RNA sequence: GGGAACGACUCGAGUAGAGUCGAAAACAUCCCAGGCGAGCUCUAUGAGGCAGCGCGUCUCGACGGCGCAACAUGGUGGCAGACCUACCGAAACGUGACUCUGCCGUACAUGUUCUUCGUGAUGACCCCAUACCUCAUCACAACGUUCACUGCGAAAGAGGUAAUAUCCCUUCGGGGAUAUUACCUCAAAAGAAACAACAACAACAAC
Reactivity to 2A3 in 0.01 (KOAc 150mM, MgCl2 10mM, bicine 150mM(pH8.5), 24C), signal-to-noise 1, nucleotides 027 to 156: c020a040u020c000c000c010a050g030g020c040g020a020g010c020u120c060u130a080u070g020a030g030g000c020a000g050c030g000c060g030u030c010u000c010g080a020c170g030g070c030g000c000a000a000c000a000u000g000g000u010g020g000c000a000g000a050c010c030u050a040c040c020g210a190a050a100c150g060u070g000a020c000u000c010u000g000c000c040g000u040a060c000a000u040g000u050u090c020u060u040c020g110u000g070a110u020g060a090c000c000c080c000a010u060a040c040c050u200c030a000u040c030a060c020a100a040c030g000u090u080c050a030c090u060g280c060g020a130a300a120

Conditions: 150 mM KOAc, 10 mM MgCl2 and 150 mM bicine (pH 8.5), 24 C. The record gives the reactivity of an RNA of 207 nucleotides to 2A3.